An RNA of 177 nucleotides, treated with 2A3 and DMS and read out base by base. For 2A3 the reverse transcriptase was SuperScript II with manganese.
[RMDB]
RNA sequence: GGGAACGACUCGAGUAGAGUCGAAAAUGGGGGACGGUUCCGUCGCCCUUACAGAACAACGUAUCAUAGACCGCGAGGUAGUUGCUGUCUGAAGUCGAGCUGUAUUUCGUGAUGAAGUCAUCGAACGAACGUGCACUUUUUUCGAAAAGUGCACGUUAAAAGAAACAACAACAACAAC
Reactivity to 2A3 in 0.01 (KOAc 150mM, MgCl2 10mM, bicine 150mM(pH8.5), 24C), signal-to-noise 2, nucleotides 027 to 126: u110g020g000g000g000g000a000c010g030g030u300u180c220c010g020u030c010g240c000c000c030u000u030a060c020a000g040a060a070c060a020a020c060g160u080a000u220c020a100u060a090g000a010c000c040g020c010g080a030g010g050u130a050g120u070u140g000c020u020g040u000c020u070g050a200a060g050u010c030g060a030g000c000u030g000u100a070u060u070u020c030g010u020g000a080u130g070a150a120g070u130c000a060u060c030g020a040a100c040g020
Reactivity to DMS in 0.01 (KOAc 150mM, MgCl2 10mM, bicine 150mM(pH8.5), 24C), signal-to-noise 3, nucleotides 027 to 126: u000g010g010g010g010g030a010c010g030g000u010u000c150c020g040u000c000g000c000c010c030u000u000a020c110a070g010a100a070c070a060a040c080g010u010a100u020c120a110u010a080g000a050c020c090g010c050g010a090g010g010u000a070g010u010u000g010c040u010g010u010c030u010g000a100a110g020u010c030g010a060g020c060u010g000u000a040u000u000u010c020g010u000g000a120u020g010a100a070g000u000c060a050u000c070g030a070a130c160g000
Source information
The reactions ran in a buffer of 150 mM KOAc, 10 mM MgCl2 and 150 mM bicine (pH 8.5), at 24 C. Reactivities are given for positions 27 through 126.